This 207-nucleotide RNA was probed chemically with 2A3. The reactions ran in a buffer of 150 mM KOAc, 10 mM MgCl2 and 150 mM bicine (pH 8.5), at 24 C. The data come from the RNA Mapping Database (RMDB), library OK3TST.
[RMDB]
RNA sequence: GGGAACGACUCGAGUAGAGUCGAAAAGUUCGUGAGUACACACGUUCGUUCGAGUUCUCGUGAUCGAACUCACACUCGUGAACUCGUUCGAGUACACUCGUUCGAUCGAGUACGUUCGUUCGAGUACGUUCGUGUACACACACUCACUCUCACGUGACGUCAUAUCGAUCUUCGGAUCGAUAUGACGAAAAGAAACAACAACAACAAC
Reactivity to 2A3 in 0.01 (KOAc 150mM, MgCl2 10mM, bicine 150mM(pH8.5), 24C), signal-to-noise 3, nucleotides 027 to 156: g090u160u280c100g000u000g020a030g000u020a000c010a000c010a000c000g000u010u000c010g000u000u000c010g000a000g000u050u000c010u040c050g020u050g020a130u130c130g060a120a090c070u140c050a040c000a000c030u050c030g020u030g030a010a000c000u000c010g000u010u000c000g000a020g020u110a050c030a020c060u010c010g000u000u010c010g010a050u000c010g000a060g170u110a210c080g010u000u000c000g010u020u000c020g000a020g000u040a020c030g020u020u120c080g000u000g000u000a000c030a010c010a000c000a020c000u030c000a070c010u010c000u050c020a070c180g060u110g040a020